[RMDB]
Conditions: 150 mM KOAc, 10 mM MgCl2 and 150 mM bicine (pH 8.5), 24 C.
Chemical mapping of a 177-nucleotide RNA with 2A3.
Reactivities are rounded to 0.1 and cut off at 0 and 3.
Source: RMDB library OK1LIB, as collected in RNAgym.
The 2A3 profile rests on 375 reads.

RNA sequence: GGGAACGACUCGAGUAGAGUCGAAAAUCAUUUAUCGCAAUAGAAACGUGUGGAUGCAGGCGGCCUGACCUCCUCAGGGUUCGUACACCCCGACACAAACGGCUCGGGUACCGGUGAAUGCCCAUCACGGUGAGCACAUCUUCGGAUGUGCUCACCGAAAAGAAACAACAACAACAAC
Reactivity to 2A3 in 0.01 (KOAc 150mM, MgCl2 10mM, bicine 150mM(pH8.5), 24C), signal-to-noise 1, nucleotides 027 to 126: u040c020a090u130u030u000a030u090c010g000c300a200a240u200a120g050a100a100a080c140g000u160g000u020g110g040a120u040g000c010a000g040g000c000g000g040c000c000u060g000a110c000c000u060c000c000u000c000a050g220g000g000u030u220c040g000u000a000c060a060c030c000c000c000g120a000c000a000c010a150a180a030c070g030g030c200u120c090g000g000g150u010a040c060c080g000g000u000g030a000a020u300g000c000c000c000a000u150c040a000